[RMDB]
About this RNA
Chemical mapping of a 177-nucleotide RNA with 2A3 and DMS. Source: RMDB library TTRDES, as collected in RNAgym. The RNA was probed in 150 mM KOAc, 10 mM MgCl2 and 150 mM bicine (pH 8.5) at 24 C.

RNA sequence: GGGAACGACUCGAGUAGAGUCGAAAAGAUAUGGAUCCAAAGAACGAUAAGCUAGACUCGGAAACGAGUCAUAGCUUUUGACGUUCCUUUGGAUCCUAAGUCAAAUGCCACGUCUUCGGACGUGGCAGCAUCCCAAUUAGUUCGCUAAUUGGGAUGCAAAAGAAACAACAACAACAAC
Reactivity to 2A3 in 0.01 (KOAc 150mM, MgCl2 10mM, bicine 150mM(pH8.5), 24C), signal-to-noise 3, nucleotides 027 to 126: g020a010u080a040u110g000g000a010u000c010c000a010a010a000g010a010a000c060g100a170u090a300a000g000c020u010a000g000a000c000u000c010g020g010a050a040a030c010g010a010g000u000c010a000u000a000g000c000u020u000u000u060g040a030c050g030u020u010c080c020u020u000u010g010g000a000u010c000c000u000a010a000g000u000c020a000a090a260u150g000c000c000a000c000g010u000c010u080u100c300g170g010a000c000g000u010g010g000c010a000
Reactivity to DMS in 0.01 (KOAc 150mM, MgCl2 10mM, bicine 150mM(pH8.5), 24C), signal-to-noise 4, nucleotides 027 to 126: g000a030u010a280u000g010g000a000u000c000c000a000a010a010g000a010a020c010g020a170u010a030a020g000c000u000a020g000a020c000u000c000g020g000a080a070a140c010g000a020g000u010c000a020u000a000g010c000u000u000u000u000g020a230c100g000u000u000c160c070u000u000u010g010g010a000u010c000c000u000a000a050g010u010c020a110a090a230u000g010c000c000a010c000g010u000c000u000u000c270g020g010a020c010g030u000g000g020c000a010